[RMDB]
RNA sequence: GGGAACGACUCGAGUAGAGUCGAAAAGCGAAAGCGACACGCUGGGGCCUGUCUGACGCUGAGGCACGAAAGCCAGGGUAGCGAACGGGAUUAGAUACCCCGGUAGUCUUGGCUGUAAACGAUGAACGCAUCAUUUAUAGUUCGCUAUAAAUGAUGCAAAAGAAACAACAACAACAAC
Reactivity to DMS in 0.01 (KOAc 150mM, MgCl2 10mM, bicine 150mM(pH8.5), 24C), signal-to-noise 9, nucleotides 027 to 126: g020c020g010a060a110a090g020c040g010a090c140a090c070g010c010u010g000g000g010g010c040c010u000g000u000c020u010g000a130c070g020c030u000g000a100g010g000c030a070c110g000a090a100a070g010c000c000a010g000g000g000u020a090g010c040g000a160a170c050g000g010g000a070u000u010a110g010a140u030a140c090c000c000c000g000g000u010a080g010u010c010u000u000g000g000c010u000g000u010a050a070a080c130g010a100u020g000a120a130c200
Reactivity to 2A3 in 0.01 (KOAc 150mM, MgCl2 10mM, bicine 150mM(pH8.5), 24C), signal-to-noise 9, nucleotides 027 to 126: g040c030g030a090a030a000g050c020g060a040c040a020c120g010c010u040g010g000g030g020c010c000u020g030u030c030u030g020a020c010g000c020u020g020a060g020g030c030a010c130g180a140a040a000g000c000c000a010g040g020g020u040a020g020c010g010a030a000c020g020g020g010a020u070u080a040g040a080u180a110c010c000c000c000g000g000u030a030g020u020c000u010u030g010g000c010u020g060u130a070a080a010c080g070a110u160g050a070a010c080